[RMDB]
RNA sequence: GGGAACGACUCGAGUAGAGUCGAAAAGAUAUGGAUGCCUCAUACAGCGAGGAUCAUACGUCGGAAACGACGUAUGGGAGCUGGUGAUGGCAUCCUAAGUCAAAGACGAAGCGUUCGCGCUUCGUCACGUAUCUAGCAGCUUCGGCUGCUAGAUACGAAAAGAAACAACAACAACAAC
Reactivity to 2A3 in 0.01 (KOAc 150mM, MgCl2 10mM, bicine 150mM(pH8.5), 24C), signal-to-noise 3, nucleotides 027 to 126: g010a010u030a030u070g000g000a010u010g000c000c020u040c020a100u300a300c040a040g020c010g090a300g060g020a000u000c010a000u000a000c010g000u010c000g020g010a020a000a050c000g010a000c000g020u000a000u000g010g000g000a010g000c020u050g000g060u080g030a280u300g040g000c010a000u000c000c000u000a020a000g010u010c030a090a000a130g000a010c010g010a000a000g040c030g030u090u260c300g000c000g030c190u010u010c000g000u010c000a000
Reactivity to DMS in 0.01 (KOAc 150mM, MgCl2 10mM, bicine 150mM(pH8.5), 24C), signal-to-noise 2, nucleotides 027 to 126: g000a060u000a300u000g020g000a000u000g010c000c000u000c020a040u010a210c040a000g010c020g020a080g020g000a040u020c000a000u000a000c000g000u000c010g020g000a070a100a130c000g040a030c000g010u000a000u000g000g000g000a020g040c000u000g010g040u000g000a050u010g010g000c000a010u000c000c000u000a000a070g010u010c020a110a140a140g000a000c000g010a010a010g020c010g020u000u010c270g010c000g010c000u000u000c000g000u000c010a000